RNA sequence: GGGAACGACUCGAGUAGAGUCGAAAAGAUGAGAGUUGAACUAUACUUAGGUAGUUCGUUUGAAUCUCACUUCAAACGUUGUCCCUAAGUUGACAACGUGAAGAGUGAGCUCUUCACAACUCUCAGAGAUAGGUUUCAUAUUCGUGUGAGAUCUAUCAAAAGAAACAACAACAACAAC
Reactivity to DMS in 0.01 (KOAc 150mM, MgCl2 10mM, bicine 150mM(pH8.5), 24C), signal-to-noise 9, nucleotides 027 to 126: g010a150u010g010a010g010a010g010u000u010g010a030a030c020u000a020u010a060c160u030u040a100g010g020u010a020g010u000u000c040g020u020u010u010g000a030a010u040c030u010c030a010c040u000u000c020a060a280a010c000g010u000u000g000u000c030c100c170u030a100a090g020u040u020g010a020c020a010a020c030g010u000g000a120a180g000a010g000u000g000a040g000c010u000c000u000u000c000a040c300a100a030c000u000c000u000c000a020g000a110
Reactivity to 2A3 in 0.01 (KOAc 150mM, MgCl2 10mM, bicine 150mM(pH8.5), 24C), signal-to-noise 9, nucleotides 027 to 126: g150a050u070g000a000g000a000g010u060u180g020a020a000c010u010a020u140a110c110u170u120a090g170g030u010a010g050u020u040c050g040u030u030u050g030a010a030u300c000u000c030a010c010u050u050c010a050a020a010c000g000u000u000g010u030c050c010c010u140a210a060g040u130u090g010a000c010a010a000c010g010u010g030a120a030g000a000g010u010g010a000g000c000u000c000u000u000c000a000c000a000a000c000u000c000u000c010a000g010a000